The record gives the reactivity of an RNA of 177 nucleotides to DMS and 2A3. The RNA was probed in 150 mM KOAc, 10 mM MgCl2 and 150 mM bicine (pH 8.5) at 24 C. It was measured as part of the RMDB library RFMREP. The DMS profile rests on 27,375 reads.

RNA sequence: GGGAACGACUCGAGUAGAGUCGAAAAAGCGUUACUUCCGAACGGCAAACCAUGGCACUACGAAGUAAACGUAUGAUAGGCAAGAGUAAAGAAAACGCAUUAAUCAAGCGUAGUAUAAGGUGGCAUGCAUAAAUGGUAAGUUCGCUUACCAUUUAUGAAAAGAAACAACAACAACAAC
Reactivity to DMS in 0.01 (KOAc 150mM, MgCl2 10mM, bicine 150mM(pH8.5), 24C), signal-to-noise 9, nucleotides 027 to 126: a110g010c010g010u000u000a040c010u000u000c010c020g010a150a200c280g000g000c050a040a070a120c260c210a060u010g010g010c020a030c030u010a300c300g000a030a030g010u000a030a040a030c020g020u000a030u000g010a060u000a060g000g010c050a060a090g010a060g010u010a030a080a100g010a080a050a060a050c040g010c010a050u000u010a070a080u010c170a070a080g000c010g010u000a060g010u000a060u010a060a070g010g010u000g000g010c060a060u000g000
Reactivity to 2A3 in 0.01 (KOAc 150mM, MgCl2 10mM, bicine 150mM(pH8.5), 24C), signal-to-noise 9, nucleotides 027 to 126: a000g020c010g010u010u010a010c000u020u000c010c010g020a050a030c100g050g000c040a050a060a060c060c020a180u250g080g000c010a010c030u030a010c040g020a030a000g010u050a100a140a010c000g030u050a080u120g080a070u080a050g070g000c040a070a010g030a020g100u170a100a100a050g060a030a080a010a000c020g000c010a030u070u150a100a060u160c070a070a020g000c020g020u020a020g030u030a080u030a100a030g030g000u010g010g020c020a020u070g020